[RMDB]
RNA sequence: GGGAACGACUCGAGUAGAGUCGAAAAGAAAGAAAGAAAGUUCAUUGUUUAUCGGCAACUUUAAACUAUAACCAUUCAAACUUUUCCAGAAGUUAGUUUGAAUAGAAAUUAAAAAGAAACUUCUGAAUAACCUUAUCAUGCUUCGGCAUGAUAAGAAGAAUUGUACAUUCUUCGGAAUGUACAAUUCAAAAGAAACAACAACAACAAC
Reactivity to 2A3 in 0.01 (KOAc 150mM, MgCl2 10mM, bicine 150mM(pH8.5), 24C), signal-to-noise 3, nucleotides 027 to 156: g040a010a030a010g060a030a050a010g070a080a080a040g030u130u090c070a090u100u180g070u060u250u120a160u150c080g050g030c030a040a030c020u050u050u130a080a120a020c040u040a020u110a250a030c020c010a010u000u000c000a000a010a000c000u000u000u010u030c080c000a000g000a010a000g000u000u000a000g000u000u000u000g010a030a020u090a160g020a010a050a010u130u250a040a140a020a010a000g000a000a000a000c000u000u000c000u000g000a000a030u050a010a000c010c000u000u010a000u000c000a000u000g000c000u040u030c110g090g000c000a000u000g000a000u000a000a000g000a000a000